[RMDB]
RNA sequence: GGGAACGACUCGAGUAGAGUCGAAAAGAUAUGGAGUAUAUUAGCUUUUGACGAGUAUCGGAAACGAUACAUCGAUAAGCUAUAUACUCCUAAGUCAAAGGCUGAAUAUCUUCGGAUAUUCAGCCAACAGCAGUAAAGACUUCGGUCUUUACUGCUGAAAAGAAACAACAACAACAAC
Reactivity to 2A3 in 0.01 (KOAc 150mM, MgCl2 10mM, bicine 150mM(pH8.5), 24C), signal-to-noise 2, nucleotides 027 to 126: g010a000u020a040u100g000g000a010g030u010a010u010a010u120u300a040g030c010u160u190u180u250g070a060c000g030a000g020u010a010u020c000g000g040a060a030a010c020g010a000u010a000c030a210u010c010g030a050u040a090a010g020c000u020a000u000a000u000a000c000u000c010c000u000a030a000g000u000c010a080a060a100g030g000c040u020g000a020a010u040a000u000c010u040u100c300g040g000a000u000a000u020u000c000a000g000c000c000a000a000
Reactivity to DMS in 0.01 (KOAc 150mM, MgCl2 10mM, bicine 150mM(pH8.5), 24C), signal-to-noise 2, nucleotides 027 to 126: g000a030u000a300u000g000g000a040g020u000a000u000a000u020u010a010g030c000u010u010u000u010g010a150c040g010a090g010u000a000u000c010g000g000a080a080a150c000g040a000u000a000c000a020u000c000g010a050u000a040a020g010c000u000a020u000a010u000a010c000u010c000c030u000a010a040g000u000c020a060a110a120g000g010c000u010g010a010a010u010a000u000c000u010u010c300g010g010a010u000a000u000u000c000a010g010c000c000a010a040
This 177-nucleotide RNA was probed chemically with 2A3 and DMS. DMS adducts were read by reverse transcription with MarathonRT. 2A3 adducts were read by reverse transcription with SuperScript II with manganese. Values cover nucleotides 27 to 126. The DMS profile rests on 1,937 reads. The reactions ran in a buffer of 150 mM KOAc, 10 mM MgCl2 and 150 mM bicine (pH 8.5), at 24 C. Source: RMDB library TTRDEL, as collected in RNAgym.